[RMDB]
RNA sequence: GGGAACGACUCGAGUAGAGUCGAAAAAAAAUUUGCAGGACUUCACUCCCUACUCAACUACUAUCUACCCAUCUCUCUUCACUCCAUACUUCACUCCUUUAAACUCAUCACCUCACCAUCUAUCUUACCCAUAACCAUAUCUCCACAUCCACCUAAAGUUUCUAUCUAUGUUCGCAUAGAUAGAAACAAAAGAAACAACAACAACAAC
Reactivity to DMS in 0.01 (KOAc 150mM, MgCl2 10mM, bicine 150mM(pH8.5), 24C), signal-to-noise 1, nucleotides 027 to 156: a040a060a020a070u000u000u000g030c070a050g020g000a070c040u010u010c030a050c000u000c020c000c010u000a030c040u000c040a060a040c040u000a060c040u000a060u010c010u010a130c030c020c010a160u000c040u000c040u000c010u000u000c020a070c020u000c030c020a100u000a060c030u000u000c020a080c060u020c010c010u000u000u000a080a050a120c020u000c000a060u000c020a040c000c010u000c020a060c040c020a070u000c040u000a070u010c040u000u000a100c030c020c000a070u000a070a080c030c030a090u000a070u000c010u000c020c010a060c060a080u010c030c020a040c010c030u000a060a070a160
Reactivity to 2A3 in 0.01 (KOAc 150mM, MgCl2 10mM, bicine 150mM(pH8.5), 24C), signal-to-noise 5, nucleotides 027 to 156: a000a000a000a010u070u060u070g010c030a020g000g060a040c010u060u030c070a030c050u050c000c000c010u020a040c020u030c060a060a050c030u090a030c010u060a080u080c020u050a060c000c010c020a080u020c020u010c010u000c000u080u070c020a030c040u020c020c010a040u030a120c010u040u070c020a030c040u040c000c000u070u100u090a110a100a020c030u050c040a040u060c010a070c010c010u020c000a010c020c010a030u010c020u070a050u020c010u030u040a050c000c010c010a040u050a070a040c020c010a030u030a060u130c040u030c030c020a040c000a040u080c020c090a050c060c020u140a110a110a090
The record gives the reactivity of an RNA of 207 nucleotides to DMS and 2A3. Values cover nucleotides 27 to 156. The reactions ran in a buffer of 150 mM KOAc, 10 mM MgCl2 and 150 mM bicine (pH 8.5), at 24 C.